[RMDB]
Overview:
An RNA of 177 nucleotides, treated with 2A3 and DMS and read out base by base. Conditions: 150 mM KOAc, 10 mM MgCl2 and 150 mM bicine (pH 8.5), 24 C. 2A3 adducts were read by reverse transcription with SuperScript II with manganese.
RNA sequence: GGGAACGACUCGAGUAGAGUCGAAAAGCUAGCGUGUGCCCAGGGAAGAGUUCUCUUUUCUUUUUAACAAGCAUAUCCUACCUUGGAAACGGAUUAUCCGGCGAUAAGGAGGAUGCCUUGGCAAAGCAAGAGUACUAUGAUUCGUCAUAGUACUCUUAAAAGAAACAACAACAACAAC
Reactivity to 2A3 in 0.01 (KOAc 150mM, MgCl2 10mM, bicine 150mM(pH8.5), 24C), signal-to-noise 9, nucleotides 027 to 126: g030c030u070a020g030c030g060u090g040u070g070c010c010c020a020g020g010g010a040a040g030a030g080u150u020c060u010c000u060u040u030u050c010u020u080u020u030u090a080a060c030a020a000g010c010a040u040a050u290c020c020u110a300c010c000u010u000g010g020a030a060a020c000g000g020a040u110u120a100u300c010c000g050g000c050g040a010u020a060a000g000g000a000g000g000a000u000g000c010c010u020u010g040g010c080a080a040a010g050c010
Reactivity to DMS in 0.01 (KOAc 150mM, MgCl2 10mM, bicine 150mM(pH8.5), 24C), signal-to-noise 9, nucleotides 027 to 126: g010c040u000a060g020c070g010u010g020u010g010c020c020c030a130g000g000g010a030a040g010a150g000u000u010c080u010c030u010u000u000u000c010u010u010u000u010u020a060a160c030a020a020g000c050a080u030a160u000c000c000u000a110c000c000u000u000g000g000a170a150a030c000g000g000a300u020u020a130u020c000c000g000g000c010g010a300u050a010a010g000g010a060g000g000a010u000g000c230c010u000u000g000g000c150a060a060a080g020c210